The record gives the reactivity of an RNA of 207 nucleotides to DMS and 2A3.
The 2A3 profile rests on 1,864 reads.
DMS adducts were read by reverse transcription with MarathonRT.
The reactions ran in a buffer of 150 mM KOAc, 10 mM MgCl2 and 150 mM bicine (pH 8.5), at 24 C.
RNA sequence: GGGAACGACUCGAGUAGAGUCGAAAAACGAUAACGAGGCGCUCGCUAUUGCUGCGUAACUGACGGCCUGACGGUCUGACGUUACAAAGCUAAAGCGCGGUUGCACCCCACCGGGCAACAGAAGGGGAAAGGCGACCCCGUUUCGACGGGGUCGCAACAUAAUCUUGACGUUCGCGUCAAGAUUAUGAAAAGAAACAACAACAACAAC
Reactivity to DMS in 0.01 (KOAc 150mM, MgCl2 10mM, bicine 150mM(pH8.5), 24C), signal-to-noise 1, nucleotides 027 to 156: a150c040g010a180u030a020a100c060g020a070g050g040c030g000c020u030c030g050c030u000a200u000u000g030c000u000g010c300g030u000a010a000c000u000g010a300c300g020g020c010c030u000g000a140c240g070g000u010c000u010g000a300c300g010u000u020a050c000a080a300a050g000c030u000a050a040a050g000c010g040c040g030g000u000u000g010c010a120c010c000c010c150a080c100c000g010g000g000c040a020a180c040a070g000a050a080g000g000g040g040a100a090a040g010g010c000g000a030c000c000c000c010g010u000u000u000c220g020a000c020g040g010g040g010u010c000g010c000a000a000
Reactivity to 2A3 in 0.01 (KOAc 150mM, MgCl2 10mM, bicine 150mM(pH8.5), 24C), signal-to-noise 2, nucleotides 027 to 156: a000c050g020a060u140a100a020c050g020a050g070g030c060g040c090u120c040g000c030u090a100u160u280g010c020u010g010c000g000u000a000a000c000u010g030a010c010g000g000c010c040u130g130a080c150g000g000u000c010u010g010a000c010g000u000u000a000c000a000a020a000g000c000u000a020a030a000g000c010g000c000g000g000u020u170g080c040a090c000c060c020c000a000c000c010g110g130g000c000a010a010c000a030g020a010a000g030g000g010g020a150a060a070g120g000c020g000a000c000c000c010c020g000u060u050u070c190g090a000c010g000g010g000g000u000c000g010c000a000a000
For 2A3 the reverse transcriptase was SuperScript II with manganese.